[RMDB]
RNA sequence: GGGAACGACUCGAGUAGAGUCGAAAAGAUAUGGACUCCCUGAAUGGCUGAUGACCUCUCUCGGAAACGAGAGGAGCAAGGCCGCGGGAGUCCUAAGUCAAAAGCAAGCGUGUUCGCACGCUUGCAAGAUCCCAGUAUAGUUCGCUAUACUGGGAUCAAAAGAAACAACAACAACAAC
Reactivity to 2A3 in 0.01 (KOAc 150mM, MgCl2 10mM, bicine 150mM(pH8.5), 24C), signal-to-noise 2, nucleotides 027 to 126: g000a000u010a020u070g010g010a000c000u020c000c000c070u070g300a300a240u300g020g000c030u050g000a300u070g010a130c000c020u000c000u020c010u010c030g020g000a000a020a000c020g000a000g050a090g070g000a000g000c000a040a050g000g010c000c040g040c070g000g000g000a010g000u000c000c000u000a000a000g010u000c010a020a030a080a100g000c000a000a000g000c000g030u030g090u220u300c300g090c090a010c020g000c000u010u010g000c000a000a010
Reactivity to DMS in 0.01 (KOAc 150mM, MgCl2 10mM, bicine 150mM(pH8.5), 24C), signal-to-noise 4, nucleotides 027 to 126: g020a030u000a150u000g010g000a010c010u000c000c000c010u010g020a180a080u010g010g040c000u000g020a090u020g000a140c300c000u000c000u000c010u010c000g000g000a020a030a050c000g010a020g010a030g000g000a030g010c010a050a070g000g020c000c000g010c190g000g000g000a000g010u000c000c000u000a000a050g000u000c010a120a080a110a150g000c000a010a020g010c000g020u000g010u000u020c210g020c010a010c000g000c000u000u000g010c010a010a040